RNA sequence: GGGAACGACUCGAGUAGAGUCGAAAAAAAAAAGCACGUCGAGGUGCAGGCGUAUUUCAAAAGGCUGCACGAGCAGAUCCGGCAGAGCGAGAGGCACCGCCUGUUCGAUUUGCCCGUGUAUUGCGUGGUCAACAACAGGGCGUACCAGGAGCUCUGCAGUCUAAUCUUGUUUCGACAAGAUUAGACUAAAAGAAACAACAACAACAAC
Reactivity to 2A3 in 0.01 (KOAc 150mM, MgCl2 10mM, bicine 150mM(pH8.5), 24C), signal-to-noise 3, nucleotides 027 to 156: a000a000a000a000a000a000g110c100a060c070g050u080c030g030a040g010g070u020g000c020a000g020g030c040g010u120a110u040u180u080c120a140a160a040a060g030g020c000u030g000c060a060c070g000a030g000c010a000g000a060u050c020c010g020g000c010a000g000a000g000c000g000a040g010a030g130g000c030a000c020c080g000c000c000u020g000u000u080c080g100a300u030u010u040g000c000c000c010g020u070g070u150a220u110u300g020c000g050u180g010g000u090c020a010a010c000a000a000c000a040g000g070g030c020g020u040a070c040c010a010g020g040a020g010c000u000c000u020g000c000
Reactivity to DMS in 0.01 (KOAc 150mM, MgCl2 10mM, bicine 150mM(pH8.5), 24C), signal-to-noise 2, nucleotides 027 to 156: a010a050a100a110a130a090g000c050a010c030g040u000c050g010a050g010g010u000g000c010a060g000g010c060g030u000a030u000u010u000c140a030a060a060a130g010g000c070u000g010c000a090c120g030a160g000c010a070g000a130u000c000c040g050g010c000a030g000a090g040c020g010a300g030a120g000g000c000a040c040c030g030c000c000u000g000u010u000c040g010a160u000u000u000g000c010c000c000g000u000g030u000a050u000u000g010c060g050u010g010g020u000c080a050a040c030a000a010c000a010g000g050g020c030g000u010a120c050c010a120g000g020a300g000c020u010c020u000g030c050